[RMDB]
RNA sequence: GGGAACGACUCGAGUAGAGUCGAAAACACGUGUUGGAUUAUGGCUGAACGCCUCUAAGUCAGAAUCCGUGCUAGAUACAAUGACCUUGUCCCGCGCAUUUACCGUUGUGUCGAAAUAAGGCGUAAGCACAUGAAUCAUCUUCGGAUGAUUCAUGUGAAAAGAAACAACAACAACAAC
Reactivity to 2A3 in 0.01 (KOAc 150mM, MgCl2 10mM, bicine 150mM(pH8.5), 24C), signal-to-noise 3, nucleotides 027 to 126: c040a010c050g120u120g060u160u240g010g000a020u010u030a030u080g010g000c000u010g040a090a010c010g010c030c000u000c020u080a010a020g030u000c010a010g030a020a030u000c000c040g010u060g040c010u060a070g020a100u060a070c020a050a040u120g050a080c020c020u050u050g060u070c010c010c020g020c020g010c030a090u040u080u160a120c050c040g030u070u040g010u030g020u020c010g060a080a060a090u130a040a020g000g000c010g030u010a040a030g030
Reactivity to DMS in 0.01 (KOAc 150mM, MgCl2 10mM, bicine 150mM(pH8.5), 24C), signal-to-noise 6, nucleotides 027 to 126: c080a080c170g010u000g030u010u010g020g000a030u000u000a060u010g010g000c010u000g000a140a090c070g000c010c000u010c090u000a160a050g000u000c000a020g000a040a030u000c010c020g030u000g010c080u000a090g010a070u010a040c070a050a050u000g000a100c130c060u000u000g010u000c020c030c020g020c140g020c070a060u000u000u000a080c170c050g010u000u000g020u000g020u000c040g020a060a060a080u000a100a050g010g000c020g010u000a120a130g000
Background:
Source: RMDB library RFMREP, as collected in RNAgym. The record gives the reactivity of an RNA of 177 nucleotides to 2A3 and DMS. The reactions ran in a buffer of 150 mM KOAc, 10 mM MgCl2 and 150 mM bicine (pH 8.5), at 24 C. For 2A3 the reverse transcriptase was SuperScript II with manganese.